[RMDB]
Description: The record gives the reactivity of an RNA of 177 nucleotides to DMS and 2A3. For 2A3, 1,334 sequencing reads were counted. The DMS profile rests on 1,724 reads. For 2A3 the reverse transcriptase was SuperScript II with manganese. The RNA was probed in 150 mM KOAc, 10 mM MgCl2 and 150 mM bicine (pH 8.5) at 24 C.
RNA sequence: GGGAACGACUCGAGUAGAGUCGAAAACAAUGAAUGGCAUUGCAAUCAGGAAACCACGCUCAGUAAGUUCGUAGCAUGGCUGCGCUCUGUUCAUUUUAUCUACGUAUGAGGUCUCCUUGAAAUCAAGAAGCGAAUAUCUGUUCGCAGAUAUUCGCUUAAAAGAAACAACAACAACAAC
Reactivity to DMS in 0.01 (KOAc 150mM, MgCl2 10mM, bicine 150mM(pH8.5), 24C), signal-to-noise 3, nucleotides 027 to 126: c130a080a040u010g010a090a070u000g030g020c170a030u010u010g030c100a120a060u010c120a080g010g010a050a090a190c010c020a040c060g020c030u020c040a060g010u010a090a090g000u000u000c100g050u010a050g020c040a060u000g020g000c020u010g000c100g010c050u000c020u000g000u000u000c050a060u000u010u000u000a070u000c050u000a050c020g000u000a060u020g000a050g000g000u010c020u010c010c030u000u010g010a040a090a070u000c190a090a120g000
Reactivity to 2A3 in 0.01 (KOAc 150mM, MgCl2 10mM, bicine 150mM(pH8.5), 24C), signal-to-noise 2, nucleotides 027 to 126: c040a000a040u070g050a070a050u060g060g020c050a060u020u080g000c000a020a070u090c050a080g080g050a050a120a000c030c000a010c030g020c000u030c020a040g040u180a140a050g010u240u070c040g020u030a000g000c040a070u070g090g000c010u000g000c010g000c000u010c000u030g000u060u000c020a090u020u000u040u040a110u000c020u060a050c040g100u160a130u170g050a030g000g030u010c000u040c000c000u060u140g100a010a070a030u080c040a050a040g100